[RMDB]
RNA sequence: GGGAACGACUCGAGUAGAGUCGAAAAUAUGGUGCCAAAAAGUUUUGACUUUAUCUUGUAGACAGUGGGAAGCCAUGGAUUGUUUUAGGUAAGAGAGUGACAGGCUGAUUUCCCUUUCAUAAAAAUCACAUUGGCAACAUGGGAGGAAGACGGAUUAAAUUAGUAAAUAGUUCGCUAUUUACUAAUUAAAAGAAACAACAACAACAAC
Reactivity to 2A3 in 0.01 (KOAc 150mM, MgCl2 10mM, bicine 150mM(pH8.5), 24C), signal-to-noise 4, nucleotides 027 to 156: u150a040u050g010g020u030g040c020c010a020a050a010a030a070g050u120u140u150u160g070a050c010u050u080u070a090u190c040u050u090g050u050a050g000a080c050a050g030u060g020g020g040a060a020g020c030c020a050u030g010g050a070u040u060g060u080u110u070u130a050g030g020u030a090a000g020a010g000a010g050u020g020a030c040a050g020g050c010u010g040a080u020u040u020c020c000c000u010u060u060c110a110u180a060a100a020a030a010u090c020a030c010a100u040u060g020g000c010a030a030c030a100u060g020g000g000a030g000g010a020a030g010a010c040g030g000a000u150u240a110
Reactivity to DMS in 0.01 (KOAc 150mM, MgCl2 10mM, bicine 150mM(pH8.5), 24C), signal-to-noise 5, nucleotides 027 to 156: u000a060u010g030g020u000g010c020c030a040a100a100a110a140g010u000u000u010u000g010a060c020u000u000u000a070u030c040u000u000g010u000a100g010a080c050a070g030u000g010g010g020a090a150g020c030c030a070u000g020g010a120u000u000g010u000u000u000u010a060g020g010u000a070a070g000a120g010a100g030u000g010a100c060a080g000g020c020u000g000a150u000u010u000c010c010c010u000u000u010c060a120u020a020a050a060a050a080u000c050a050c050a170u010u010g030g030c030a030a060c060a060u000g000g010g010a080g010g010a030a050g020a090c060g010g010a120u010u000a060